[RMDB]
This 207-nucleotide RNA was probed chemically with 2A3 and DMS. The data come from the RNA Mapping Database (RMDB), library OK3TST. For 2A3 the reverse transcriptase was SuperScript II with manganese. The reactions ran in a buffer of 150 mM KOAc, 10 mM MgCl2 and 150 mM bicine (pH 8.5), at 24 C.
RNA sequence: GGGAACGACUCGAGUAGAGUCGAAAAAAGGGGAUUGUGACAUUCCAGGUCCUAUUUUUGGAAUUUGCUGAAUCAUAUUCCUUAAAAAUGCAACUUGUUUGUGCUAUGAUGGAAUAGUCAUUACAUUUUGUUUUAUUUAGAAUCCUAAAAUUGACAGCAAGAAGUUAUGGUUCGCCAUAACUUCUUGAAAAGAAACAACAACAACAAC
Reactivity to 2A3 in 0.01 (KOAc 150mM, MgCl2 10mM, bicine 150mM(pH8.5), 24C), signal-to-noise 2, nucleotides 027 to 156: a000a010g140g010g000g010a040u080u080g030u020g040a020c020a060u030u060c010c020a030g050g050u040c040c040u090a180u070u080u030u070u090g050g010a060a030u050u030u170g060c070u110g070a070a050u100c010a000u010a020u090u030c000c000u030u040a060a080a030a000a000u070g010c010a010a020c010u020u060g060u080u110u050g050u060g000c010u010a030u060g080a100u180g070g060a130a010u020a030g020u030c000a000u000u140a010c010a040u010u050u000u010g010u000u080u020u080a120u020u060u040a080g060a060a060u030c020c030u130a080a150a070a060u200u250g060a020c010a010g220
Reactivity to DMS in 0.01 (KOAc 150mM, MgCl2 10mM, bicine 150mM(pH8.5), 24C), signal-to-noise 2, nucleotides 027 to 156: a100a090g010g000g000g010a050u000u020g010u000g020a070c110a110u000u000c040c010a030g010g040u000c030c030u000a120u000u000u010u000u010g010g010a040a030u000u000u000g010c080u010g010a160a110u000c020a030u010a060u000u000c010c000u000u000a010a050a080a070a080u010g000c020a030a030c010u020u000g020u000u000u000g020u000g030c020u000a050u000g020a240u000g010g010a130a050u000a100g000u010c020a050u000u010a020c020a040u000u000u000u000g000u010u000u000u010a070u020u020u000a100g010a090a100u020c040c020u010a040a040a050a120u000u000g000a130c060a130g030